RNA sequence: GGGAACGACUCGAGUAGAGUCGAAAAAGGACACUACCUGGUGACCAGCGUAGAUACGUGGCGGGGAGAAGGACGCAUUACAGGUCGCGUAUAACAGCCUCCGGCGAGGGCUCAAUCUAAUCGGACCUUCUCGGCGGGUGCUGGUCUCCUAGCACCCCAAUAGAAGCGAUUUCGAUCGCUUCUAUUGAAAAGAAACAACAACAACAAC
Reactivity to DMS in 0.01 (KOAc 150mM, MgCl2 10mM, bicine 150mM(pH8.5), 24C), signal-to-noise 2, nucleotides 027 to 156: a060g010g010a190c070a070c060u000a060c020c000u000g020g020u010g000a090c040c020a100g010c060g000u000a070g030a140u000a020c050g010u000g000g020c030g000g000g000g000a120g000a080a050g000g020a140c040g050c040a120u000u000a120c100a090g050g020u010c020g030c020g000u000a110u000a080a150c050a140g010c010c010u010c000c020g010g000c080g010a300g020g000g000c020u000c030a040a050u010c100u000a120a090u000c060g020g020a080c040c010u000u010c010u010c040g000g010c120g010g030g020u000g010c020u000g020g010u010c050u000c020c030u000a020g020c030a060c000c000c000
Reactivity to 2A3 in 0.01 (KOAc 150mM, MgCl2 10mM, bicine 150mM(pH8.5), 24C), signal-to-noise 4, nucleotides 027 to 156: a000g090g000a050c050a030c100u110a080c030c050u040g000g060u100g030a070c050c030a030g010c020g050u070a020g030a180u050a070c030g020u040g030g030c050g030g040g010g020a100g030a050a020g110g030a020c050g040c090a070u080u200a070c040a040g020g080u040c040g000c010g020u050a050u030a120a070c050a020g030c000c010u010c020c030g040g020c090g020a030g000g010g020c030u010c040a090a150u060c080u280a070a060u120c050g050g030a090c010c000u060u040c050u010c010g040g000c030g010g010g010u040g000c000u000g000g020u010c030u030c000c000u000a010g030c020a070c020c000c010